[RMDB]
RNA sequence: GGGAACGACUCGAGUAGAGUCGAAAAACUUGCUGUCGUUGACAGCGCCCAACGCUUCACAACCUGAAAGAAGCGCCUGUUAUCAGGACGGUUGAUCCAUUUACCGGUGCAGACCUCUGCAAACACCGGGUUGCAGAACAUCGCGACGGAGGUCCAAGUUACGUUUGCUGUUCGCAGCAAACGUAACAAAAGAAACAACAACAACAAC
Reactivity to 2A3 in 0.01 (KOAc 150mM, MgCl2 10mM, bicine 150mM(pH8.5), 24C), signal-to-noise 2, nucleotides 027 to 156: a000c050u070u240g020c000u000g000u030c050g270u040u210g030a000c000a000g030c000g040c000c000c000a060a080c010g000c000u040u000c040a050c010a160a050c000c000u030g000a000a000a000g000a000a000g000c000g040c000c000u140g060u210u190a180u300c010a000g000g000a000c070g010g010u000u000g040a040u060c020c000a030u040u000u210a030c030c010g030g020u010g060c060a000g020a030c000c010u000c000u010g000c020a000a030a020c000a000c010c000g020g000g020u000u030g000c010a030g040a190a070c050a100u170c110g000c000g020a000c000g030g010a000g000g000u000c000c010a120a050